[RMDB]
RNA sequence: GGGAACGACUCGAGUAGAGUCGAAAAGCGCUCCUGAACGUGACUUCAGAAGACCGGCGCCGACAAGUUAGAUUGUCAAGGCGACAGUGUAGUGACACUGGGUAAUCUAACUUACCAAUCGCCGGCGCGUUGAGUCACGUCAACAACGGUCGAGCGACGAGUAUAGGUGCUUCGGCACCUAUACUCGAAAAGAAACAACAACAACAAC
Reactivity to 2A3 in 0.01 (KOAc 150mM, MgCl2 10mM, bicine 150mM(pH8.5), 24C), signal-to-noise 2, nucleotides 027 to 156: g050c000g000c000u020c000c060u090g050a130a000c000g000u000g010a000c000u090u040c190a090g070a260a040g010a170c000c020g000g010c010g000c050c060g080a090c120a060a000g000u000u010a000g000a010u000u000g040u030c030a130a090g250g100c040g030a030c010a000g000u000g040u060a300g140u110g180a020c000a000c010u020g000g040g000u030a010a010u000c010u000a000a000c010u000u000a030c030c030a060a050u080c010g000c000c000g020g030c080g000c020g050u060u070g000a000g010u000c020a000c010g000u010c000a010a030c000a000a070c020g020g050u090c050g020a000g010c000g030a050